[RMDB]
This 207-nucleotide RNA was probed chemically with 2A3. Values are in units of 0.01, from 0 to 300, in steps of 10. The reactions ran in a buffer of 150 mM KOAc, 10 mM MgCl2 and 150 mM bicine (pH 8.5), at 24 C.
RNA sequence: GGGAACGACUCGAGUAGAGUCGAAAAAGUACAUCUCCAAUGGAACUAGGAGACCCCUCCGGUCGUAUCCAACCUCUGUUUCGGCAGAGGAUACCGUACUCCACAGCUGUAAGGCUGUGGGCCCGAGAGAAGCGCUCUCUCUCGCCCUUUUGCUCCCCACACUGGCUAUGUUCGCAUAGCCAGUGUGAAAAGAAACAACAACAACAAC
Reactivity to 2A3 in 0.01 (KOAc 150mM, MgCl2 10mM, bicine 150mM(pH8.5), 24C), signal-to-noise 3, nucleotides 027 to 156: a010g090u080a030c030a140u030c040u020c050c030a050a110u070g070g020a080a040c070u050a180g020g060a070g000a080c030c010c000c020u020c020c000g040g010u040c040g010u050a160u110c060c050a060a110c040c000u020c000u000g060u040u100u150c250g160g000c000a000g000a010g000g000a000u030a000c040c020g020u030a070c020u000c000c020a000c010a000g010c010u030g080u300a110a080g090g000c000u000g000u000g010g010g020c010c010c020g020a020g000a000g010a050a060g070c090g030c060u030c000u000c000u000c000u010c080g020c010c030c010u070u100u090u150g030c020u040c020c000c000